[RMDB]
RNA sequence: GGGAACGACUCGAGUAGAGUCGAAAAGUUGCUUACAUCAAAGAAGCAGACGGGCGCGAUCUGUCAGACAAAGAAGAUUCAUAUAUUGAUGCUUCUUUUGACUUUAUCGCCAACUCUGAUAAGAUGGCUGGCAACCGCGCUAAAGUCUUCGGUAAAACUUAUCUUAUGUGUUCGCACAUAAGAUAAGAAAAGAAACAACAACAACAAC
Reactivity to 2A3 in 0.01 (KOAc 150mM, MgCl2 10mM, bicine 150mM(pH8.5), 24C), signal-to-noise 4, nucleotides 027 to 156: g020u030u020g000c020u150u140a110c040a100u090c060a060a190a110g030a110a020g040c010a010g020a040c080g040g000g000c040g010c000g010a020u040c060u090g000u010c010a010g020a070c060a020a010a010g000a000a000g010a020u060u070c020a010u230a060u120a100u300u130g030a030u120g100c000u000u000c000u010u000u030u080g040a030c000u070u080u060a030u040c020g040c080c010a070a150c060u100c090u130g020a020u010a080a020g050a040u080g100g000c040u010g000g000c000a020a000c010c000g000c010g000c000u110a170a110a140g010u030c030u050u050c060g060g040u090a040a050a040a050
Reactivity to DMS in 0.01 (KOAc 150mM, MgCl2 10mM, bicine 150mM(pH8.5), 24C), signal-to-noise 2, nucleotides 027 to 156: g010u000u000g000c000u000u000a110c050a140u010c040a150a080a270g010a120a170g010c020a060g000a020c040g010g040g040c010g010c040g020a010u000c110u010g000u000c000a040g010a110c040a070a050a070g010a030a040g010a110u010u000c010a030u020a270u010a200u020u000g010a050u010g010c000u000u010c010u000u000u000u000g020a080c040u000u000u000a050u010c040g000c060c030a090a140c080u010c050u030g020a120u000a020a050g000a140u010g010g000c010u000g020g000c000a040a040c010c010g050c000g000c010u000a020a050a160g020u000c000u000u010c060g000g000u000a020a070a100a160
The record gives the reactivity of an RNA of 207 nucleotides to 2A3 and DMS. DMS (dimethyl sulfate) methylates the pairing face of unpaired adenines and cytosines. As a SHAPE reagent, 2A3 marks flexible, mostly unpaired nucleotides at the ribose 2'-OH. For DMS, 3,566 sequencing reads were counted. The 2A3 profile rests on 2,585 reads.